[RMDB]
RNA sequence: GGGAACGACUCGAGUAGAGUCGAAAAACAUCAUUCGUGAUGUACGGCGACCUUUGUGACCGCGCCCACGGGAGCUGCGAUUGAUCCCAUUGGGAUUAAAGCAGCGAAGAACGUGGGAGUGGCGGUCACUCUGGUACUAGAACCACUUCGGUGGUAAUACAUUCAGUCCUUUCGAGGACUGAAUGUAAAAAGAAACAACAACAACAAC
Reactivity to DMS in 0.01 (KOAc 150mM, MgCl2 10mM, bicine 150mM(pH8.5), 24C), signal-to-noise 2, nucleotides 027 to 156: a040c010a020u000c010a090u000u020c300g030u010g040a020u000g040u000a070c140g000g020c110g000a040c010c020u000u000u000g000u010g010a040c020c000g010c020g060c010c040c010a000c010g000g000g010a260g050c000u010g010c040g000a300u000u010g060a020u000c000c000c000a300u000u020g040g020g020a020u000u000a000a040a260g000c000a030g000c060g000a080a080g010a130a170c030g030u000g000g000g000a030g010u020g020g050c000g060g000u000c010a020c000u000c030u000g040g030u000a070c070u010a090g000a120a080c000c000a020c020u000u000c240g080g000u000g000g000u000a050a160
Reactivity to 2A3 in 0.01 (KOAc 150mM, MgCl2 10mM, bicine 150mM(pH8.5), 24C), signal-to-noise 3, nucleotides 027 to 156: a020c000a010u050c010a020u050u190c230g130u060g020a000u010g040u080a100c100g150g140c200g040a020c010c000u000u010u010g000u000g000a000c000c000g000c010g000c020c000c000a000c000g000g010g010a040g010c000u010g000c010g290a300u030u030g010a000u010c000c030c040a180u160u300g000g000g000a010u000u010a000a000a000g010c000a010g030c000g000a000a030g020a010a000c000g000u000g000g050g010a020g020u070g120g000c010g000g000u000c000a000c000u010c000u000g000g000u030a040c010u030a040g110a060a040c000c000a010c030u140u120c270g180g010u000g000g020u040a030a060